[RMDB]
RNA sequence: GGGAACGACUCGAGUAGAGUCGAAAAUCAGCAACUCUAGCCUAGACACCAGGUCAGUAACGUCGCCCAACCGGUACUUGAUGACGGGCCCACUCUCCUCUAGACCGUCAGGUAUAGUCUCGAAGUAUCGAGGUACUAAGUUCGCUUAGUACCUCGAAAAAGAAACAACAACAACAAC
Reactivity to DMS in 0.01 (KOAc 150mM, MgCl2 10mM, bicine 150mM(pH8.5), 24C), signal-to-noise 3, nucleotides 027 to 126: u010c060a090g020c060a060a100c060u000c080u000a070g010c020c020u000a070g010a100c040a090c070c060a060g000g000u000c060a070g020u000a060a080c060g000u000c080g000c010c040c030a100a130c130c050g000g000u000a030c030u000u010g010a080u000g000a090c060g000g000g020c040c010c020a050c100u000c050u010c020c010u000c020u000a060g010a110c030c020g010u010c070a050g020g040u010a040u000a050g010u010c020u000c050g000a080a090g020u000a120
Reactivity to 2A3 in 0.01 (KOAc 150mM, MgCl2 10mM, bicine 150mM(pH8.5), 24C), signal-to-noise 1, nucleotides 027 to 126: u090c020a000g070c030a060a130c040u030c030u130a030g040c000c000u020a060g010a060c000a000c080c020a010g020g040u010c000a020g020u020a050a000c010g010u030c030g050c020c030c000a030a010c020c000g000g050u030a050c040u070u070g060a060u060g000a070c020g040g030g000c030c020c020a010c000u020c010u000c010c000u040c010u030a040g050a050c010c020g050u050c030a010g000g000u080a070u030a100g030u000c020u000c090g060a080a020g120u150a020

The data come from the RNA Mapping Database (RMDB), library OK2TST. Chemical mapping of a 177-nucleotide RNA with DMS and 2A3. For 2A3, 1,479 sequencing reads were counted. The DMS profile rests on 2,600 reads. For 2A3 the reverse transcriptase was SuperScript II with manganese. As a SHAPE reagent, 2A3 marks flexible, mostly unpaired nucleotides at the ribose 2'-OH. For DMS the reverse transcriptase was MarathonRT. Conditions: 150 mM KOAc, 10 mM MgCl2 and 150 mM bicine (pH 8.5), 24 C.